[RMDB]
RNA sequence: GGGAACGACUCGAGUAGAGUCGAAAAAGCAGUUAUAUCGAAAAACGAUAUAACUGCAAGUAGGAUGGGGUGUGAUAGGUGGCACGGAGAAUUUUGGAUUCUCAGGGAUGGGUUCGAUUCUCAUAGUCCUAAAAGCAGUGUGUCACGACGCACUGCAGAGUGACCGACUAUUCGUAGUCGGUCACUCAAAAGAAACAACAACAACAAC
Reactivity to 2A3 in 0.01 (KOAc 150mM, MgCl2 10mM, bicine 150mM(pH8.5), 24C), signal-to-noise 1, nucleotides 027 to 156: a000g000c000a010g000u000u000a000u000a000u010c000g120a080a190a060a130a000c000g000a000u000a010u000a000a000c000u000g000c000a010a000g020u010a010g060g020a130u080g000g000g000g000u080g030u070g040a090u090a110g030g020u060g050g010c020a000c060g090g000a000g030a050a030u150u260u040u190g070g100a040u070u010c040u000c060a020g070g050g050a150u090g000g000g030u070u090c020g070a040u070u070c040u000c000a020u100a020g080u080c010c080u060a100a090a000a000g000c000a000g000u000g000u020g000u020c010a010c130g160a040c010g020c010a000c000u000g000c000a000
An RNA of 207 nucleotides, treated with 2A3 and read out base by base. High 2A3 reactivity points to a flexible backbone, as in loops and unpaired stretches. The reactions ran in a buffer of 150 mM KOAc, 10 mM MgCl2 and 150 mM bicine (pH 8.5), at 24 C. The data come from the RNA Mapping Database (RMDB), library OK3TST. For 2A3 the reverse transcriptase was SuperScript II with manganese.